[RMDB]
RNA sequence: GGGAACGACUCGAGUAGAGUCGAAAACGGAGGUGGCUACGACGAGAGCGAUGUCGUCGUCGAUGGGCUGUCCGGCUUUCAGGGUGCGGCUAAGCAGCUGGUCGUUGGGCGGUACCGGCAGGUAGCAGCGUUCGCCAGCUAUCGCGGCCUCGAGCUACAUGGGAGGUAGGUUCGCCUACCUCCCAUGAAAAGAAACAACAACAACAAC
Reactivity to 2A3 in 0.01 (KOAc 150mM, MgCl2 10mM, bicine 150mM(pH8.5), 24C), signal-to-noise 1, nucleotides 027 to 156: c040g040g030a060g010g030u100g000g000c000u100a050c000g000a010c000g010a010g000a040g190c070g010a060u270g060u180c040g040u000c010g000u030c040g010a110u110g050g030g000c010u130g020u140c040c000g020g000c010u010u130u090c010a080g180g000g000u290g160c000g050g070c050u080a300a000g030c000a000g020c030u040g010g040u110c010g130u060u030g000g050g000c100g030g000u100a230c000c000g120g080c070a070g000g000u000a010g000c090a000g010c060g030u070u070c070g000c000c000a000g010c030u010a040u060c000g000c020g020g000c050c000u000c010g000a040g000c000u000a080
An RNA of 207 nucleotides, treated with 2A3 and read out base by base. Reactivities are given for positions 27 through 156. It was measured as part of the RMDB library OK3TST. The 2A3 profile rests on 493 reads. The RNA was probed in 150 mM KOAc, 10 mM MgCl2 and 150 mM bicine (pH 8.5) at 24 C.